This 177-nucleotide RNA was probed chemically with DMS.
DMS (dimethyl sulfate) methylates the pairing face of unpaired adenines and cytosines.
For DMS the reverse transcriptase was MarathonRT.
[RMDB]
RNA sequence: GGGAACGACUCGAGUAGAGUCGAAAAGAUAUGGACGAAGCUCCCCACCCUAACGUCGCGACGACGCCUCAAAUUCGGAAACGAAUUUGAGGCAUCAGCGACGGUUAGGAGGCUUCGUCCUAAGUCAUCACGUUAAAUGCUUCGGCAUUUAACGUGAAAAAGAAACAACAACAACAAC
Reactivity to DMS in 0.01 (KOAc 150mM, MgCl2 10mM, bicine 150mM(pH8.5), 24C), signal-to-noise 1, nucleotides 027 to 126: g000a140u000a200u030g000g000a010c010g010a050a000g020c010u000c210c000c000c040a300c090c000c010u020a000a060c020g010u000c000g000c000g010a170c300g010a010c000g010c060c000u010c000a000a000a000u000u000c000g020g020a040a110a100c000g010a010a000u030u000u000g020a010g000g090c000a010u000c010a170g000c010g020a000c000g000g000u000u000a010g010g010a060g010g010c000u000u000c000g010u010c000c010u010a000a030g000u010c140a060